This 177-nucleotide RNA was probed chemically with 2A3 and DMS. For 2A3 the reverse transcriptase was SuperScript II with manganese. The RNA was probed in 150 mM KOAc, 10 mM MgCl2 and 150 mM bicine (pH 8.5) at 24 C. For DMS the reverse transcriptase was MarathonRT. The 2A3 profile rests on 9,597 reads.
[RMDB]
RNA sequence: GGGAACGACUCGAGUAGAGUCGAAAACAGGGGGCAUUCACAGUGAGAUCAGCAGUGACCUAGCUGCAGGGUCCAUAACAGCAUGCAUGAUGAAGCUAGGACCUGGUCCAAAUAUUCAGAAUGCAAAACACUCAUUAGGUUUCGACCUAAUGAGUGUAAAAGAAACAACAACAACAAC
Reactivity to 2A3 in 0.01 (KOAc 150mM, MgCl2 10mM, bicine 150mM(pH8.5), 24C), signal-to-noise 6, nucleotides 027 to 126: c040a010g030g020g020g060g000c010a020u030u060c010a030c010a070g120u060g100a200g000a070u030c010a000g050c010a010g020u010g110a100c000c030u030a010g000c010u020g000c020a040g080g020g010u010c040c010a060u120a220a100c060a040g100c020a060u150g010c010a020u070g040a070u100g050a160a000g020c010u030a050g030g020a040c000c080u060g040g000u000c010c010a030a110a020u230a080u090u080c010a020g010a040a010u000g000c000a000a000a040
Reactivity to DMS in 0.01 (KOAc 150mM, MgCl2 10mM, bicine 150mM(pH8.5), 24C), signal-to-noise 5, nucleotides 027 to 126: c070a070g030g000g010g010g000c030a010u000u010c020a130c140a120g000u000g000a130g020a020u000c010a050g010c130a060g030u010g000a100c080c070u000a100g000c000u000g020c030a100g000g010g000u010c030c030a080u030a080a100c230a090g020c160a100u020g000c080a060u020g000a220u020g010a030a050g000c020u000a080g000g000a060c040c040u010g000g010u000c000c000a040a090a120u030a060u010u020c130a140g000a080a010u000g010c020a060a030a130